RNA sequence: GGGAACGACUCGAGUAGAGUCGAAAAAGUUAGUGAUGAAAUCCCAUGCGUGUCAUCUGACUUCCACGUCUCGCUCUGCCUUCGCUCUGCGCUGUCUGCGUUCUGCAGCUUGGGUUUGGCUAGGGCAUUCAUGCCAGAAGUUCGCUUCUGGCAUGAAAAAAGAAACAACAACAACAAC
Reactivity to 2A3 in 0.01 (KOAc 150mM, MgCl2 10mM, bicine 150mM(pH8.5), 24C), signal-to-noise 4, nucleotides 027 to 126: a000g080u080u060a020g040u020g110a040u060g070a020a080a120u060c020c010c020a020u070g070c080g000u080g020u030c020a060u050c050u030g040a050c020u090u000c020c030a060c050g070u030c040u060c070g020c000u020c010u020g010c000c000u030u030c030g010c020u010c010u040g030c090g020c040u030g050u080c040u110g010c020g090u190u080c040u140g000c000a020g000c010u020u040g000g000g000u030u040u030g010g010c060u070a020g030g020g000c000a010
Reactivity to DMS in 0.01 (KOAc 150mM, MgCl2 10mM, bicine 150mM(pH8.5), 24C), signal-to-noise 2, nucleotides 027 to 126: a080g020u010u010a040g010u000g010a080u000g030a040a100a120u010c020c030c000a040u020g000c070g000u020g010u000c040a020u010c020u010g000a080c050u000u000c000c040a100c140g010u010c030u000c040g010c030u000c050u000g000c020c000u010u010c140g000c010u000c010u010g010c110g000c020u000g010u000c050u000g000c040g000u010u020c120u000g000c020a020g000c060u000u000g020g000g030u020u010u000g000g000c030u000a030g000g000g010c040a220